[RMDB]
Source information: Structure probing data (2A3 and DMS) for a 307-nucleotide construct. DMS adducts were read by reverse transcription with MarathonRT. Values cover nucleotides 27 to 266. Conditions: 150 mM KOAc, 10 mM MgCl2 and 150 mM bicine (pH 8.5), 24 C.
RNA sequence: GGGAACGACUCGAGUAGAGUCGAAAACAAUCUGCUUCGGCAGAUUGACACAUUACGGUGACGUAAUGUGACCUUACUCGUGAGAGUAAGGAGUUGCUGCGUGAGCAGCAACAGCGUAUCCGUUCGCGGAUACGCACGGAAGCGUGAGCUUCCGAGCAGCAACUUCGGUUGCUGCAGGUUGGAGCUACGGCUCCAACCACAUCUUCGUUCGCGAAGAUGAAGUAACGGCGUGAGCCGUUACAACGUGGUGCAUACGAUAAUGCAUUACACUGUGGUUCGCCACAGUGAAAAGAAACAACAACAACAAC
Reactivity to 2A3 in 0.01 (KOAc 150mM, MgCl2 10mM, bicine 150mM(pH8.5), 24C), signal-to-noise 9, nucleotides 027 to 266: c000a000a000u000c000u000g000c000u050u060c170g150g000c000a000g000a000u000u000g000a010c000a000c000a000u000u000a000c000g020g020u060g060a020c000g000u000a000a000u000g000u000g000a000c000c000u000u000a000c000u000c010g050u070g090a090g000a000g040u000a000a000g000g000a030g010u000u000g000c000u000g000c010g060u130g080a070g010c000a000g000c000a000a000c010a010g000c000g000u000a000u000c000c000g010u020u070c280g020c010g130g000a000u000a000c000g000c010a010c010g000g000a000a000g000c030g040u150g070a030g010c000u000u000c000c000g000a030g000c000a000g000c000a000a010c000u060u100c210g120g000u000u000g000c000u000g000c000a000g000g000u000u000g000g000a000g000c010u020a070c250g110g000c000u010c000c000a000a000c000c000a000c000a000u000c000u010u020c000g050u020u080c280g020c010g110a000a000g000a000u010g040a110a020g000u000a000a000c000g000g000c010g000u020g010a000g000c000c000g000u000u000a000c000a000a010c000g030u080g120g000u010g010c000a000u000a010c000g260a120u030a050a000u020g000c000a000u000u030a030
Reactivity to DMS in 0.01 (KOAc 150mM, MgCl2 10mM, bicine 150mM(pH8.5), 24C), signal-to-noise 6, nucleotides 027 to 266: c000a010a010u000c000u000g000c000u000u020c190g020g000c000a000g000a010u000u000g010a220c010a010c010a000u000u000a000c000g000g000u000g000a070c000g020u000a000a000u000g010u000g000a290c010c000u000u000a000c000u000c000g000u020g000a140g010a030g010u000a010a010g000g010a160g010u000u000g010c000u010g010c010g010u020g000a240g010c010a010g010c000a000a000c010a140g000c000g000u000a000u000c000c000g010u000u020c210g020c000g000g000a010u000a000c000g010c010a020c050g000g010a000a010g020c000g010u010g000a240g010c000u000u000c000c000g010a090g010c000a000g000c000a010a000c000u000u020c180g020g010u000u000g000c000u000g000c000a010g010g010u000u000g000g000a020g010c010u000a080c240g020g010c000u000c000c000a000a000c000c010a280c010a000u000c000u000u000c000g020u010u030c190g020c010g010a010a000g000a000u000g000a100a120g000u000a010a010c010g010g000c000g010u000g000a030g020c020c000g010u000u000a000c000a120a270c020g000u010g010g020u000g000c010a010u000a030c010g000a090u020a020a000u000g000c010a010u000u010a220